[RMDB]
RNA sequence: GGGAACGACUCGAGUAGAGUCGAAAAGAUAUGGACCAAUCCGUUACAGCAAUGACGUCGGAAACGAUAAGACAGCUGAACGGAGUUGGUCCUAAGUCAAACGCACACCCCUUCGGGGGUGUGCGAACAUUACCACGAGGUUCGCCUCGUGGUAAUGAAAAGAAACAACAACAACAAC
Reactivity to 2A3 in 0.01 (KOAc 150mM, MgCl2 10mM, bicine 150mM(pH8.5), 24C), signal-to-noise 2, nucleotides 027 to 126: g020a010u090a050u170g000g000a030c020c000a020a010u000c010c000g010u020u060a300c000a010g030c030a070a300u170g050a070c090g020u000c020g030g080a100a080a080c020g030a010u020a150a070g150a100c080a030g070c020u020g010a000a000c020g010g000a010g010u050u030g000g010u030c000c000u010a020a000g030u010c020a070a030a130c020g040c000a010c000a010c010c020c050c000u010u180c300g070g000g000g020g000u000g000u000g000c010g020a000a000
Reactivity to DMS in 0.01 (KOAc 150mM, MgCl2 10mM, bicine 150mM(pH8.5), 24C), signal-to-noise 3, nucleotides 027 to 126: g000a030u000a300u010g000g000a010c000c000a030a030u000c010c000g000u010u000a150c000a020g020c000a100a120u000g000a190c300g000u000c000g000g010a080a090a150c020g000a010u000a100a180g010a120c140a130g000c000u000g000a050a000c010g010g010a000g030u000u000g020g000u000c000c000u000a020a070g000u010c020a060a070a230c040g010c000a000c010a020c010c000c000c000u000u000c180g000g050g000g000g000u000g010u000g000c000g000a020a050